Chemical mapping of a 177-nucleotide RNA with DMS and 2A3. The data come from the RNA Mapping Database (RMDB), library M2PK50. 2A3 adducts were read by reverse transcription with SuperScript II with manganese. DMS adducts were read by reverse transcription with MarathonRT. Conditions: 150 mM KOAc, 10 mM MgCl2 and 150 mM bicine (pH 8.5), 24 C. For DMS, 1,455 sequencing reads were counted.
[RMDB]
RNA sequence: GGGAACGACUCGAGUAGAGUCGAAAAAAGCUCAUUUUCGAAUGAGCUUGAAGCGUGAACGCAGGAUAACGCAGAAACGCGCGGCUGAACCUCCCAAGCGAAAGAUUAAGGUCUUCGGACCUUAAAACUACUGUCAUGGUUUCGACCAUGACAGUAGAAAAGAAACAACAACAACAAC
Reactivity to DMS in 0.01 (KOAc 150mM, MgCl2 10mM, bicine 150mM(pH8.5), 24C), signal-to-noise 2, nucleotides 027 to 126: a020a000g000c030u000c000a020u000u000u010u030c130g060a030a000u000g000a010g010c000u020u000g010a100a050g020c020g020u000g010a120a210c200g010c030a070g000g000a140u010a060a130c130g000c040a120g000a170a090a110c090g000c050g000c130g000g000c030u000g000a130a090c070c050u010c020c010c000a150a050g000c140g000a060a060a070g010a080u000u000a010a010g000g000u000c000u000u020c110g020g000a010c000c000u000u000a000a030a100a180
Reactivity to 2A3 in 0.01 (KOAc 150mM, MgCl2 10mM, bicine 150mM(pH8.5), 24C), signal-to-noise 1, nucleotides 027 to 126: a000a000g020c000u000c000a010u000u020u040u060c100g120a010a000u000g000a020g000c050u000u010g010a010a000g020c030g000u020g070a060a020c030g010c020a010g040g220a200u110a210a030c070g000c010a030g140a040a090a010c010g000c020g020c000g080g000c020u040g010a030a000c010c040u040c000c010c010a020a030g050c040g080a150a030a050g050a020u080u020a020a000g000g000u020c020u040u090c270g060g000a000c000c000u030u020a010a000a000a010